[RMDB]
RNA sequence: GGGAACGACUCGAGUAGAGUCGAAAAAUACACGAACAAUGAGAAACUACUAGAGGUGUAAUGCCAUAGCAGUAAAGGUAGUAGUUACUAUUUUUACCUACAUUGUUUUAAAGAGUAUAGGUGUUAAAAGAGAUAAGCUAUUCGUAGCUUAUCUCUUAAAAGAAACAACAACAACAAC
Reactivity to 2A3 in 0.01 (KOAc 150mM, MgCl2 10mM, bicine 150mM(pH8.5), 24C), signal-to-noise 3, nucleotides 027 to 126: a000u080a000c010a000c020g010a010a000c020a000a020u030g020a020g060a120a140a030c030u090a000c000u010a040g080a180g230g020u060g040u190a150a110u180g000c000c000a020u010a010g000c030a000g010u030a000a000a050g020g000u010a000g010u020a050g070u120u130a040c010u020a040u000u060u010u040u020a010c000c010u030a060c010a020u010u020g040u030u040u020u040a090a180a010g100a010g040u080a050u090a170g100g060u070g080u070u130a120a220
Reactivity to DMS in 0.01 (KOAc 150mM, MgCl2 10mM, bicine 150mM(pH8.5), 24C), signal-to-noise 7, nucleotides 027 to 126: a060u000a040c020a100c090g000a020a010c010a010a020u000g010a120g010a300a170a090c110u000a030c010u000a010g000a150g040g010u000g010u000a110a060u020g010c010c010a130u000a010g010c020a040g010u000a020a040a020g000g000u000a010g010u000a130g010u010u010a080c020u000a000u000u000u000u010u000a030c090c020u000a180c010a010u000u000g000u000u000u000u020a100a100a160g000a110g010u000a050u000a060g010g010u000g000u010u000a050a050